Structure probing data (DMS and 2A3) for a 207-nucleotide construct. For DMS the reverse transcriptase was MarathonRT. 2A3 adducts were read by reverse transcription with SuperScript II with manganese. The reactions ran in a buffer of 150 mM KOAc, 10 mM MgCl2 and 150 mM bicine (pH 8.5), at 24 C.

RNA sequence: GGGAACGACUCGAGUAGAGUCGAAAAGUCGCAAGACCGGUAGCAAUACCGACAGAGGUCAUAUACGUCAGUUAAGCCUGUCCGGCGUCACGACGGCCAGGUCGAAAAUUGAGUGAAUCGCCGUAACGGAGCGUGUUCGUCCGCGACGUCACGGUUAUCGUUACACGUAGUUCGCUACGUGUAACGAAAAAGAAACAACAACAACAAC
Reactivity to DMS in 0.01 (KOAc 150mM, MgCl2 10mM, bicine 150mM(pH8.5), 24C), signal-to-noise 1, nucleotides 027 to 156: g050u020c060g030c160a060a120g050a150c060c050g040g060u000a030g030c220a070a110u000a060c030c010g060a170c100a190g040a100g060g000u010c070a090u000a190u010a090c020g020u000c030a080g020u000u000a100a240g030c000c000u000g010u000c010c020g000g000c030g020u000c230a080c060g040a010c030g000g000c110c010a030g000g020u000c000g010a040a060a030a080u000u000g020a150g030u010g000a030a140u000c100g030c000c010g050u000a030a030c070g000g000a090g020c010g050u030g010u000u020c170g000u010c040c030g000c000g060a130c000g000u000c020a020c000g010g000u000u000a060
Reactivity to 2A3 in 0.01 (KOAc 150mM, MgCl2 10mM, bicine 150mM(pH8.5), 24C), signal-to-noise 2, nucleotides 027 to 156: g050u060c030g000c030a050a000g030a080c040c000g000g000u010a020g000c060a020a140u010a060c000c010g000a040c050a000g060a040g050g030u050c040a000u080a000u020a150c060g070u020c070a040g030u020u040a050a010g010c000c000u000g000u000c000c010g000g080c040g050u050c020a010c080g010a000c000g000g000c000c000a010g000g020u050c030g030a000a010a020a100u160u140g080a010g020u030g050a050a020u120c070g000c030c020g010u010a010a000c030g020g010a010g010c020g000u050g040u060u130c130g170u130c040c040g020c030g000a000c000g000u010c010a000c010g000g080u050u030a030